[RMDB]
This 177-nucleotide RNA was probed chemically with DMS and 2A3. It was measured as part of the RMDB library TTRDEL. For 2A3 the reverse transcriptase was SuperScript II with manganese. The DMS profile rests on 23,673 reads.
RNA sequence: GGGAACGACUCGAGUAGAGUCGAAAAGAUAUGGAAUGAAGGUCUUUUGACGCUCCUUCGGAAACGAAGAGCGAUAAGACCCAUUCCUAAGUCAAAAGUCGGGUGUAUCUUCGGAUACACCCGACAACAUAUGACGUUAGUUCGCUAACGUCAUAUGAAAAGAAACAACAACAACAAC
Reactivity to DMS in 0.01 (KOAc 150mM, MgCl2 10mM, bicine 150mM(pH8.5), 24C), signal-to-noise 9, nucleotides 027 to 126: g000a020u000a200u010g000g000a010a000u000g000a170a140g020g000u000c000u000u000u010u010g020a230c030g000c000u000c190c110u000u000c000g010g000a040a040a080c000g000a020a020g000a020g010c000g010a080u000a020a010g000a010c000c010c000a000u000u000c000c000u000a010a090g000u000c010a090a090a130a120g010u000c000g010g000g010u000g010u000a000u000c000u000u010c220g020g000a010u000a000c000a000c000c000c000g000a000c000a010a070
Reactivity to 2A3 in 0.01 (KOAc 150mM, MgCl2 10mM, bicine 150mM(pH8.5), 24C), signal-to-noise 9, nucleotides 027 to 126: g000a010u040a020u070g010g030a010a010u040g060a300a160g030g000u010c020u040u300u190u260g130a060c000g000c000u150c040c050u030u010c000g010g000a020a010a010c000g000a000a000g000a010g000c010g020a030u160a090a020g000a000c000c000c000a000u000u000c000c000u000a030a010g030u010c020a030a030a080a160g000u000c010g010g010g000u040g010u050a000u010c020u050u140c300g040g000a000u010a000c000a000c000c000c000g000a000c000a000a000
Description:
The RNA was probed in 150 mM KOAc, 10 mM MgCl2 and 150 mM bicine (pH 8.5) at 24 C. Reactivities are rounded to 0.1 and cut off at 0 and 3.